[RMDB]
RNA sequence: GGGAACGACUCGAGUAGAGUCGAAAAAGUUGUUCGCAACUUCCAUCGAUAUGGAAUGGGAGGCGAGCAGGACAGCGAAGAACUUUCGUCGGAAACGACGAAAGGGAGCUGUUAUUGGCUCGCUCAUUCCUAAGUCUUAAUGUCGAUUCGUCGACAAUCGUUUAGAUAGAUUCGUCUAUCUAAACGAAAAAGAAACAACAACAACAAC
Reactivity to DMS in 0.01 (KOAc 150mM, MgCl2 10mM, bicine 150mM(pH8.5), 24C), signal-to-noise 3, nucleotides 027 to 156: a130g010u000u010g000u000u000c110g010c030a030a120c050u010u030c030c010a090u000c060g010a120u000a180u000g000g000a060a080u000g010g030g090a050g000g000c010g010a020g030c000a100g010g010a020c010a030g010c020g000a120a180g010a120a190c010u000u000u000c010g040u010c010g020g010a170a140a280c020g020a010c010g020a010a010a010g000g010g000a220g030c010u000g010u000u010a040u010u010g030g050c000u000c000g010c000u000c010a050u000u000c000c000u000a040a100g010u000c000u000u000a110a120u000g040u010c010g000a070u000u010c180g020u000c050g010a110c120a050a110
Reactivity to 2A3 in 0.01 (KOAc 150mM, MgCl2 10mM, bicine 150mM(pH8.5), 24C), signal-to-noise 8, nucleotides 027 to 156: a000g020u010u020g020u060u110c170g020c120a040a020c020u110u060c030c010a190u190c140g040a040u040a050u190g020g020a010a010u020g030g160g090a090g200g130c020g000a000g000c000a010g040g040a010c000a000g000c030g170a300a020g020a060a030c000u010u000u000c000g010u000c010g000g020a050a060a070c010g000a000c000g000a000a000a000g000g000g000a020g000c010u000g070u020u020a290u120u140g170g010c000u000c000g000c010u040c010a010u000u000c000c000u020a080a020g010u010c020u080u260a210a130u140g000u000c000g020a020u080u070c220g090u030c010g090a020c000a030a060